[RMDB]
RNA sequence: GGGAACGACUCGAGUAGAGUCGAAAAAGAGCUGCAAGACCGCGAGGUGGAGCUAAUCUCAUAAAACCGUUCUCAGUUCGGAUUGUAGGCUGCAACUCGCCUACAUGAAGCUGGAAUCGCUAGUAAUAUCAUCAGAAUCAUUCGUGAUUCUGAUGAUAAAAGAAACAACAACAACAAC
Reactivity to 2A3 in 0.01 (KOAc 150mM, MgCl2 10mM, bicine 150mM(pH8.5), 24C), signal-to-noise 9, nucleotides 027 to 126: a000g080a010g010c060u080g010c020a030a040g060a080c010c010g060c060g050a070g010g020u030g020g030a000g000c000u010a050a090u040c010u000c030a030u180a070a120a050a070c030c000g010u020u000c190u010c020a070g020u250u230c010g010g010a010u000u010g000u000a000g000g000c030u090g050c070a070a090c040u070c180g000c000c000u000a000c000a000u010g000a000a010g000c000u010g010g020a010a030u130c050g010c090u050a050g040u140a140a080u010
Reactivity to DMS in 0.01 (KOAc 150mM, MgCl2 10mM, bicine 150mM(pH8.5), 24C), signal-to-noise 6, nucleotides 027 to 126: a050g000a040g020c090u000g020c030a070a300g000a050c020c020g020c220g000a150g000g020u000g010g000a300g010c030u010a050a090u010c020u000c040a090u020a060a050a110a110c140c020g000u000u000c000u020c010a030g000u020u020c030g010g000a120u000u000g010u000a010g000g020c000u010g040c140a080a070c240u000c160g010c000c000u000a010c000a020u000g000a300a120g000c040u000g000g000a030a060u020c090g000c100u010a100g010u010a080a120u020
Source information:
The record gives the reactivity of an RNA of 177 nucleotides to 2A3 and DMS. Source: RMDB libraries RFM100 and RFMREP, as collected in RNAgym. For DMS the reverse transcriptase was MarathonRT.